[RMDB]
RNA sequence: GGGAACGACUCGAGUAGAGUCGAAAAUGAUCUAUGACUGCAUCAAGCUUUUCCCAAUCUUGUAUAGUGAAUUUCAUAUAGGAAGCUUCAUUUUUGGGAGAAGAGUCCAAUGGUGUUAUAAAGCCCUGUUCCUAAGAGGGCAGGAAAUCAGUCAGCAGUAUUAGUCACUGUUCGCAGUGACUAAUACAAAAGAAACAACAACAACAAC
Reactivity to DMS in 0.01 (KOAc 150mM, MgCl2 10mM, bicine 150mM(pH8.5), 24C), signal-to-noise 2, nucleotides 027 to 156: u000g010a080u010c040u000a090u010g020a040c010u010g020c050a090u000c020a080a260g010c010u010u000u000u010c000c000c000a050a060u000c050u000u000g010u020a090u000a020g020u010g020a110a300u000u010u000c040a100u020a130u020a250g020g000a120a300g010c040u000u000c010a050u000u000u060u000u000g020g000g000a030g030a010a030g010a100g010u000c050c070a040a170u000g000g010u000g030u000u000a110u010a040a100a160g010c070c000c000u000g020u000u000c020c030u000a140a150g010a160g020g000g010c020a000g000g000a060a060a120u000c040a080g020u000c040a040g050c080a190
Reactivity to 2A3 in 0.01 (KOAc 150mM, MgCl2 10mM, bicine 150mM(pH8.5), 24C), signal-to-noise 5, nucleotides 027 to 156: u140g030a040u070c060u110a070u070g010a020c000u000g000c010a010u010c020a030a090g040c000u010u010u000u010c000c000c000a000a020u010c020u020u050g040u090a090u090a200g010u040g100a170a120u060u170u150c080a050u210a050u170a230g100g030a050a020g000c000u010u040c010a010u000u000u010u010u000g000g010g000a020g010a020a010g010a030g100u040c030c020a030a050u040g010g030u020g020u060u170a160u120a190a080a030g010c000c000c010u010g030u120u180c010c000u080a130a030g150a280g090g000g000c010a010g000g010a020a040a010u060c000a000g010u000c010a010g000c020a010